[RMDB]
RNA sequence: GGGAACGACUCGAGUAGAGUCGAAAACUGCGAUCUCGAUUUCACGGCCGGCGUCACGCCCACGGGCGAGGUCUACGACGCCAUGCAGAAAAAUAUCCGCAUCAACCAUGUCGCGGUCGUCCGCGCUGGGCGUGCGGGUUCGCAAGUCCGCAUCGGCCACGCAUUCCUGGUUCGCCAGGAAUGCGUGAAAAGAAACAACAACAACAAC
Reactivity to 2A3 in 0.01 (KOAc 150mM, MgCl2 10mM, bicine 150mM(pH8.5), 24C), signal-to-noise 2, nucleotides 027 to 156: c020u010g000c000g000a020u000c010u000c030g070a090u050u120u170c080a070c050g090g010c020c000g000g000c010g050u090c050a040c060g010c000c000c010a090c190g050g010g000c030g000a050g000g050u070c030u030a020c070g070a000c000g000c000c010a010u050g050c040a010g100a170a130a000a010a010u300a080u010c070c050g060c080a070u040c030a080a120c000c010a080u100g080u270c030g010c020g000g100u090c050g100u010c030c000g000c000g010c020u090g000g000g000c040g000u000g000c010g010g010g000u050u000c030g030c020a040a030g050u050c000c010g100c070a070u140c060g050g030c010

Source information: Conditions: 150 mM KOAc, 10 mM MgCl2 and 150 mM bicine (pH 8.5), 24 C. An RNA of 207 nucleotides, treated with 2A3 and read out base by base. Reactivities are given for positions 27 through 156.